[RMDB]
RNA sequence: GGGAACGACUCGAGUAGAGUCGAAAAGCUAGUCGGAGACGACUAGCAACGAUCAGUUCGCUGAUCGGAAGGUGCAUUCAAAUACGCUAGAAGCACCAAUACUCGACGCAUAGCGUAAAACUGAGAAAGCAGAUAACAAAAAUAAAAAGGCGUCGUGCUGACUUUUACUCUUCGGAGUAAAAGUCAGAAAAGAAACAACAACAACAAC
Reactivity to 2A3 in 0.01 (KOAc 150mM, MgCl2 10mM, bicine 150mM(pH8.5), 24C), signal-to-noise 1, nucleotides 027 to 156: g000c020u000a000g010u020c000g030g000a000g000a080c000g000a000c000u010a010g000c000a010a000c000g000a000u000c000a000g040u050u110c240g090c070u000g020a000u000c030g000g050a130a040g030g000u000g090c130a280u000u000c000a050a050a050u050a020c020g000c000u000a020g000a040a000g030c000a000c030c000a000a010u080a060c020u010c000g000a000c040g000c030a080u060a030g030c000g030u020a010a090a090a000c030u030g000a040g110a280a000a030g100c060a000g060a110u300a190a060c080a080a110a080a170a000u210a070a060a000a000a000g000g020c010g000u000c000g000u000g060

The record gives the reactivity of an RNA of 207 nucleotides to 2A3.
The reactions ran in a buffer of 150 mM KOAc, 10 mM MgCl2 and 150 mM bicine (pH 8.5), at 24 C.
The data come from the RNA Mapping Database (RMDB), library OK3TST.